An RNA of 177 nucleotides, treated with DMS and 2A3 and read out base by base. Source: RMDB library OK2TST, as collected in RNAgym. The RNA was probed in 150 mM KOAc, 10 mM MgCl2 and 150 mM bicine (pH 8.5) at 24 C. 2A3 adducts were read by reverse transcription with SuperScript II with manganese.

RNA sequence: GGGAACGACUCGAGUAGAGUCGAAAAGCAAGCUUCUCGCUGAAGGCAAGACGGUCAAGAUCAUUACGGUCGGAAAGAAGGGCGCGGAUAUUCUGCGUCGUGAAUUCAGCGCAUUGCUGCACGACCAGUCAUCGUCCUAGUUCGCUAGGACGAUGACAAAAGAAACAACAACAACAAC
Reactivity to DMS in 0.01 (KOAc 150mM, MgCl2 10mM, bicine 150mM(pH8.5), 24C), signal-to-noise 2, nucleotides 027 to 126: g010c060a080a050g040c030u000u000c050u000c020g000c020u000g010a050a020g010g010c080a080a070g000a080c120g000g030u000c070a060a080g020a040u010c070a050u020u010a100c150g000g000u000c030g020g020a020a100a050g010a130a080g010g000g000c000g000c030g000g020a100u020a090u010u000c020u010g040c110g040u000c000g000u000g010a130a150u000u010c020a030g000c010g000c300a120u000u000g020c020u000g000c030a140c090g020a100c040c060a170
Reactivity to 2A3 in 0.01 (KOAc 150mM, MgCl2 10mM, bicine 150mM(pH8.5), 24C), signal-to-noise 2, nucleotides 027 to 126: g000c040a080a000g000c020u080u100c110u100c080g000c020u010g020a020a000g060g020c030a000a020g090a030c040g010g000u070c090a020a010g040a160u080c050a060u100u300a050c060g040g000u020c000g000g080a120a130a030g120a020a040g050g030g000c020g000c040g050g000a030u090a170u300u100c020u040g000c020g010u030c010g030u040g010a050a130u040u040c000a000g040c010g000c090a080u050u280g000c040u030g010c020a000c070g050a050c000c010a000